[RMDB]
RNA sequence: GGGAACGACUCGAGUAGAGUCGAAAAGCUGAAAAUGAUUUAUGGGUAGUGGAAUAGGUUAACCGUAAGACCUUUGGUUGAAAAACUAUGAAAUUAAGCCUCAGAUAUUUUAUCUUUGGUUACGGGAGUACAAACGUAUGUUCGCAUACGUUUGUACAAAAGAAACAACAACAACAAC
Reactivity to 2A3 in 0.01 (KOAc 150mM, MgCl2 10mM, bicine 150mM(pH8.5), 24C), signal-to-noise 8, nucleotides 027 to 126: g020c050u040g040a050a050a060a090u140g060a120u090u120u180a120u110g030g040g030u060a070g040u040g110g060a160a130u050a100g010g000u020u030a040a040c000c000g000u010a010a020g030a010c010c000u010u020u030g020g000u010u020g030a040a030a020a020a010c040u040a050u120g060a020a010a030u110u080a120a020g000c000c010u010c010a010g020a020u020a120u070u170u140u110a010u040c010u000u010u020g020g000u020u020a010c010g010g010g030a040
Reactivity to DMS in 0.01 (KOAc 150mM, MgCl2 10mM, bicine 150mM(pH8.5), 24C), signal-to-noise 5, nucleotides 027 to 126: g010c030u000g000a040a040a100a060u010g010a100u000u020u010a040u010g000g000g000u010a040g020u010g000g000a110a080u030a020g010g000u000u000a140a070c000c010g020u000a040a050g000a010c010c010u000u000u000g000g010u000u000g000a070a060a080a040a020c020u000a020u010g000a030a020a120u010u020a100a160g000c020c000u000c050a020g000a020u000a050u020u030u040u010a000u000c010u000u000u000g000g010u000u000a010c020g000g000g020a250